[RMDB]
RNA sequence: GGGAACGACUCGAGUAGAGUCGAAAAGGAAUUGUUUUUCACAGUUGCUCAAAAACGAUGGUAGUGACUUACGAGUUACGUUACACUUUGGAGUCUCAUCUUUAGUAAACAUAUCAUAAUAUUCGAUAUUACGAGUUGACAUAUCGAACAAAUUCCAAAUGUACGGGAAGUUCGCUUCCCGUACAUUAAAAGAAACAACAACAACAAC
Reactivity to 2A3 in 0.01 (KOAc 150mM, MgCl2 10mM, bicine 150mM(pH8.5), 24C), signal-to-noise 5, nucleotides 027 to 156: g030g020a030a030u030u020g030u010u020u040u160u190c100a070c020a080g030u040u030g000c000u020c050a120a050a010a020a030c100g020a030u040g030g090u140a170g100u050g080a010c000u000u120a140c040g010a010g020u050u070a050c080g080u120u120a050c060a020c100u060u090u290g040g000a000g010u000c000u020c020a030u000c000u030u090u020a050g030u110a090a080a040c050a050u060a050u120c020a020u080a300a040u110a210u170u140c020g000a000u020a000u030u070a060c090g010a040g120u080u120g070a010c010a030u080a050u060c020g010a000a010c020a020a090a070u030u020c010c000a000
Reactivity to DMS in 0.01 (KOAc 150mM, MgCl2 10mM, bicine 150mM(pH8.5), 24C), signal-to-noise 2, nucleotides 027 to 156: g000g010a150a050u000u010g030u010u010u000u030u000c030a140c070a150g020u000u000g000c020u040c090a110a060a130a060a070c070g020a060u000g020g050u000a100g010u000g010a010c000u000u000a100c100g000a070g040u010u000a060c130g020u000u010a090c110a050c100u000u000u000g020g010a070g010u000c010u000c030a110u000c050u000u000u000a070g020u000a060a070a050c020a040u000a100u000c050a050u000a010a140u000a140u020u000c040g000a060u000a020u000u000a150c090g010a120g040u000u000g030a150c160a050u010a020u020c050g040a020a060c010a030a040a070u000u000c020c010a090
Source information: Structure probing data (2A3 and DMS) for a 207-nucleotide construct. DMS adducts were read by reverse transcription with MarathonRT. The RNA was probed in 150 mM KOAc, 10 mM MgCl2 and 150 mM bicine (pH 8.5) at 24 C. The 2A3 profile rests on 2,201 reads.